[RMDB]
RNA sequence: GGGAACGACUCGAGUAGAGUCGAAAACGGUGUGCCAGAACGGAGCCACCUGUACAAACACUCACGGAUCGUACAGCUGCAUCUGCGUGAAUGGCUGGGCGGGCUUGGACUGCAGCAACAACACGGAAGCAUGUAUGUACUUCGGUACAUACAUGCUAAAAGAAACAACAACAACAAC
Reactivity to 2A3 in 0.01 (KOAc 150mM, MgCl2 10mM, bicine 150mM(pH8.5), 24C), signal-to-noise 3, nucleotides 027 to 126: c060g020g000u030g070u200g000c000c040a070g030a170a050c080g070g000a020g030c010c000a020c010c010u020g030u040a060c100a020a140a010c020a020c050u080c020a040c070g060g010a070u090c070g020u060a050c020a060g020c010u040g000c010a040u020c020u070g030c000g070u070g070a170a060u090g050g000c050u030g000g030g000c050g020g020g030c020u010u080g070g000a040c000u010g000c010a020g010c010a020a060c020a020a000c020a020c060g050g040a020
Reactivity to DMS in 0.01 (KOAc 150mM, MgCl2 10mM, bicine 150mM(pH8.5), 24C), signal-to-noise 4, nucleotides 027 to 126: c090g000g000u000g020u030g030c000c040a150g030a100a120c140g020g000a200g030c100c010a060c050c010u000g020u000a040c110a110a070a130c100a060c090u010c090a110c070g010g000a080u000c090g010u000a110c090a070g000c070u000g020c050a060u020c040u000g000c060g000u000g010a070a130u000g000g020c040u000g010g000g020c040g010g010g000c050u010u000g010g010a100c090u010g000c040a050g010c060a060a030c090a040a030c070a080c150g010g010a160

Chemical mapping of a 177-nucleotide RNA with 2A3 and DMS.
Values cover nucleotides 27 to 126.
It was measured as part of the RMDB library OK2TRN.
The RNA was probed in 150 mM KOAc, 10 mM MgCl2 and 150 mM bicine (pH 8.5) at 24 C.
High 2A3 reactivity points to a flexible backbone, as in loops and unpaired stretches.
For 2A3, 3,530 sequencing reads were counted.
2A3 adducts were read by reverse transcription with SuperScript II with manganese.